RNA sequence: GGGAACGACUCGAGUAGAGUCGAAAAGGCGGUUUUACAUACUGGUCAGACACGGCUGGAGGCCAAGGUCAAGUUGAAAGUUGCAGUCCAGCCAGCAUGAGAACUGCCAUGCGAGCGUAGAGACACACAUGCCUUCGCUUUUCGAAGCGAAGGCAUGAAAAGAAACAACAACAACAAC
Reactivity to DMS in 0.01 (KOAc 150mM, MgCl2 10mM, bicine 150mM(pH8.5), 24C), signal-to-noise 2, nucleotides 027 to 126: g010g030c000g000g000u000u000u000u020a180c000a100u000a010c030u020g000g010u000c100a200g000a040c000a300c070g000g000c010u010g000g000a250g000g000c010c080a190a270g000g000u000c050a220a100g000u000u070g000a200a080a120g000u030u000g000c130a220g040u000c000c040a270g000c000c000a060g020c000a040u010g000a130g000a050a000c030u000g000c010c000a100u010g000c080g000a060g010c110g000u000a000g000a080g040a090c180a150c240a300
Reactivity to 2A3 in 0.01 (KOAc 150mM, MgCl2 10mM, bicine 150mM(pH8.5), 24C), signal-to-noise 1, nucleotides 027 to 126: g010g000c000g000g050u000u000u000u080a120c000a020u050a000c000u000g000g070u100c080a000g030a010c030a010c020g000g030c040u040g030g030a030g070g000c030c080a110a040g110g030u130c000a000a050g000u060u030g070a070a010a000g000u020u000g010c090a000g000u000c000c010a010g030c000c000a010g000c010a030u030g000a000g000a030a000c000u000g000c000c000a010u090g110c080g050a010g120c020g030u130a040g040a040g060a080c030a000c000a000